An RNA of 207 nucleotides, treated with 2A3 and read out base by base. The reactions ran in a buffer of 150 mM KOAc, 10 mM MgCl2 and 150 mM bicine (pH 8.5), at 24 C. For 2A3 the reverse transcriptase was SuperScript II with manganese.
RNA sequence: GGGAACGACUCGAGUAGAGUCGAAAAGACAAGAUUCACGAAACCCAAGGUGCAUGCCGAGGUGCGGUUGGCCUCGUUAACAAACCGCAAAAAAAUAGUCGCAAACGACGAAAACUACGCACUCGCAAAAAGCGGCACGUCUUCGGACGUGCCGCAACCAUAAAAUAAUGUUCGCAUUAUUUUAUGGAAAAGAAACAACAACAACAAC
Reactivity to 2A3 in 0.01 (KOAc 150mM, MgCl2 10mM, bicine 150mM(pH8.5), 24C), signal-to-noise 1, nucleotides 027 to 156: g050a000c080a040a020g000a180u110u160c040a040c110g070a060a040a110c020c030c010a040a010g010g020u040g040c020a030u110g100c060c010g000a000g000g020u030g010c000g050g000u010u060g030g020c020c000u020c020g090u030u010a040a000c020a060a010a010c000c000g000c050a000a020a000a000a000a000a190u160a010g010u020c010g000c060a110a080a070c070g050a000c010g020a090a030a030a070c100u030a040c000g030c010a010c020u090c050g030c040a000a090a040a110a010g010c030g000g010c020a000c000g000u000c030u020u010c020g120g010a010c000g030u020g000c020c150g000c020a000a030